[RMDB]
RNA sequence: GGGAACGACUCGAGUAGAGUCGAAAAAAGGGAAACGCGUAUUGUUACUUAUGGACUCUGUAACACGGUUUGCUCGUGCUCAGCGUGAAAUAGGCUUAGCUGCGGGAGAACCACCGACUCGCCGCGGCAAUCGGAAUCGUUUCGACGAUUCCGAUUGAAAAGAAACAACAACAACAAC
Reactivity to 2A3 in 0.01 (KOAc 150mM, MgCl2 10mM, bicine 150mM(pH8.5), 24C), signal-to-noise 1, nucleotides 027 to 126: a000a000g120g000g010a010a000a010c080g030c020g090u090a080u100u160g020u060u020a040c000u030u120a050u220g110g020a040c060u050c030u130g110u100a050a000c020a020c060g020g030u050u040u100g050c030u000c050g030u040g000c010u010c100a030g000c010g000u030g080a060a090a130u150a100g080g010c070u080u090a000g000c030u040g010c020g000g000g020a030g000a040a020c020c010a000c000c040g000a020c010u020c060g000c000c010g030c080g010g000
Reactivity to DMS in 0.01 (KOAc 150mM, MgCl2 10mM, bicine 150mM(pH8.5), 24C), signal-to-noise 3, nucleotides 027 to 126: a070a040g010g020g000a060a040a060c100g010c080g030u020a080u010u000g010u010u010a070c020u010u000a090u010g010g010a160c080u000c020u000g010u020a020a070c030a050c080g030g010u010u000u000g010c050u010c050g020u010g010c020u000c070a030g010c060g030u000g010a040a080a060u010a080g000g000c090u010u000a130g000c000u000g010c010g000g000g020a030g000a080a070c070c040a130c070c030g000a090c000u000c010g020c010c010g010c020g000g020